The record gives the reactivity of an RNA of 177 nucleotides to DMS and 2A3. For 2A3, 2,724 sequencing reads were counted. For 2A3 the reverse transcriptase was SuperScript II with manganese. Conditions: 150 mM KOAc, 10 mM MgCl2 and 150 mM bicine (pH 8.5), 24 C.

RNA sequence: GGGAACGACUCGAGUAGAGUCGAAAAUGGUGAAGGUGACCCUGCCGUCGCCGAUGACGUAGCUCAGCCGGCGGUUGACCCGGUAGGUCCCGCCGGGGGUGUGCACCCAGGGCAGCAUGCGCAGGAGACCUGGAAGGGAUUUCGAUCCCUUCCAGGUAAAAGAAACAACAACAACAAC
Reactivity to DMS in 0.01 (KOAc 150mM, MgCl2 10mM, bicine 150mM(pH8.5), 24C), signal-to-noise 3, nucleotides 027 to 126: u030g020g010u000g010a100a060g010g010u000g000a140c050c000c000u020g000c010c020g010u000c020g010c020c020g000a140u030g010a110c150g000u020a180g020c010u000c040a150g020c000c020g030g000c000g030g000u020u040g000a030c020c020c250g020g030u070a210g000g000u000c000c000c000g030c010c010g030g000g010g000g020u000g000u020g010c050a090c030c010c020a110g000g000g010c040a070g010c080a010u020g010c100g000c040a020g010g000a160g010
Reactivity to 2A3 in 0.01 (KOAc 150mM, MgCl2 10mM, bicine 150mM(pH8.5), 24C), signal-to-noise 3, nucleotides 027 to 126: u210g020g000u040g050a050a000g030g050u050g070a090c010c000c030u010g020c030c020g050u030c030g010c010c030g020a030u080g020a010c120g050u100a030g020c020u020c090a050g100c050c000g020g020c000g050g000u060u300g020a020c000c010c000g040g050u180a090g000g000u010c000c000c020g000c040c000g000g000g020g000g010u050g020u070g020c040a010c010c030c010a000g000g030g000c000a010g010c010a030u060g040c040g000c030a010g040g020a110g010